The record gives the reactivity of an RNA of 177 nucleotides to DMS and 2A3. It was measured as part of the RMDB library OK2TST. The RNA was probed in 150 mM KOAc, 10 mM MgCl2 and 150 mM bicine (pH 8.5) at 24 C. For 2A3, 4,679 sequencing reads were counted.

RNA sequence: GGGAACGACUCGAGUAGAGUCGAAAAAGGAACAGGAUUGUGUAUUGAAGCCUAUUCUAAUUUUCCAAAUGAAGAGGAAAUUGUAUUACCACCAACUACACGGUAUCGACUUGUUAAUUACAUGGAGGUUAGGGAUACUAUUCGUAGUAUCCCUAACAAAAGAAACAACAACAACAAC
Reactivity to DMS in 0.01 (KOAc 150mM, MgCl2 10mM, bicine 150mM(pH8.5), 24C), signal-to-noise 7, nucleotides 027 to 126: a120g000g000a030a020c030a040g010g000a130u000u000g010u000g020u000a060u000u010g000a130a160g000c010c010u000a080u000u000c010u020a060a080u010u000u000u000c010c010a060a120a140u010g000a100a070g010a190g000g000a030a040a040u000u000g010u000a060u000u010a150c060c040a090c090c060a050a060c090u000a030c040a030c040g010g010u000a070u000c080g000a100c060u000u000g000u000u000a060a090u020u010a070c070a060u010g010g010a120g010
Reactivity to 2A3 in 0.01 (KOAc 150mM, MgCl2 10mM, bicine 150mM(pH8.5), 24C), signal-to-noise 5, nucleotides 027 to 126: a000g070g000a050a020c040a030g000g050a040u170u120g050u030g020u150a070u100u110g090a090a030g020c010c010u000a010u000u020c010u040a040a160u030u040u020u020c010c000a030a060a110u230g040a090a060g060a050g060g040a020a050a030u090u090g040u070a100u030u110a050c020c020a030c000c020a040a020c020u050a020c030a000c030g040g010u100a100u110c040g060a050c030u050u030g020u070u080a110a110u120u130a040c040a070u110g120g050a060g120